Structure probing data (DMS) for a 207-nucleotide construct. Values cover nucleotides 27 to 156. The DMS profile rests on 2,257 reads. Conditions: 150 mM KOAc, 10 mM MgCl2 and 150 mM bicine (pH 8.5), 24 C. The data come from the RNA Mapping Database (RMDB), library OK3TST.
RNA sequence: GGGAACGACUCGAGUAGAGUCGAAAAUAGGCGAACGAGAGGCCCUCUCUUGUGCGGAGUUGUCACGCUGACACAAUUGUUAUGAUGUCCGAUUCCGGUAGCAUCGCGGCGAUGAUUUCAUAGGACAUCUUAUGAACCCAAGCGCUUCGGGGAAGCAAAUAUAGCGCCUAUUCGUAGGCGCUAUAUUAAAAGAAACAACAACAACAAC
Reactivity to DMS in 0.01 (KOAc 150mM, MgCl2 10mM, bicine 150mM(pH8.5), 24C), signal-to-noise 1, nucleotides 027 to 156: u000a130g030g000c050g020a050a010c060g000a040g000a040g010g010c020c050c030u000c020u000c030u000u000g050u010g010c100g000g010a100g030u000u000g010u000c030a110c040g050c100u000g030a160c040a080c050a070a130u000u000g020u000u010a100u000g010a040u000g000u000c010c010g030a250u000u000c080c070g020g040u000a100g030c000a040u000c020g030c080g030g030c080g000a100u000g000a000u000u010u010c030a110u000a110g030g000a070c030a050u000c010u010u000a070u020g020a070a140c030c000c040a090a120g020c160g010c050u000u010c050g020g020g020g020a060a070g020c030a060